This 207-nucleotide RNA was probed chemically with 2A3 and DMS. Reactivities are given for positions 27 through 156. For 2A3 the reverse transcriptase was SuperScript II with manganese. Conditions: 150 mM KOAc, 10 mM MgCl2 and 150 mM bicine (pH 8.5), 24 C.
RNA sequence: GGGAACGACUCGAGUAGAGUCGAAAAUGACUGUUGGGCCCUAGCAUCCCCAACAGUCUAAUGAUGUAGUGGUGUGGAGUACGCGAGAGCGUACUCAGCAUCCGAGAGGAUGCGAUUCCGACCCACAUUAUUGCAUCUAACGGUCGGACGCUAGGGAAUGCCACUAUUAUUUCGAUAAUAGUGGCAUAAAAGAAACAACAACAACAAC
Reactivity to 2A3 in 0.01 (KOAc 150mM, MgCl2 10mM, bicine 150mM(pH8.5), 24C), signal-to-noise 2, nucleotides 027 to 156: u050g000a000c010u010g010u010u010g010g000g000c010c000c000u000a010g040c040a140u300c050c010c000c000a000a000c000a020g000u010c000u000a020a040u100g010a000u010g030u030a000g000u010g000g010u000g000u010g010g020a040g030u000a000c000g010c010g010a040g010a010g120c010g010u000a000c000u010c020a000g000c000a000u010c000c000g030a030g020a030g070g010a000u010g000c050g010a050u240u130c110c110g020a060c050c000c010a010c000a000u000u000a000u000u010g000c000a000u000c020u040a060a030c060g150g050u190c020g120g050a010c020g000c010u010a000g010g020g000a010
Reactivity to DMS in 0.01 (KOAc 150mM, MgCl2 10mM, bicine 150mM(pH8.5), 24C), signal-to-noise 1, nucleotides 027 to 156: u010g010a020c030u000g050u000u000g000g030g010c050c030c040u070a070g020c010a140u000c080c010c000c010a050a000c000a060g020u000c000u010a030a070u010g020a080u000g020u000a050g000u000g030g010u020g000u020g010g000a010g040u010a000c000g050c000g010a300g000a300g020c010g000u010a000c000u000c010a050g000c010a010u000c010c010g010a290g000a300g030g000a100u010g020c020g000a200u000u000c050c100g000a110c050c020c000a030c030a100u000u010a030u000u000g000c030a070u000c060u020a060a130c080g000g010u000c010g020g000a050c090g000c040u000a030g000g000g000a170
Reactivities are rounded to 0.1 and cut off at 0 and 3.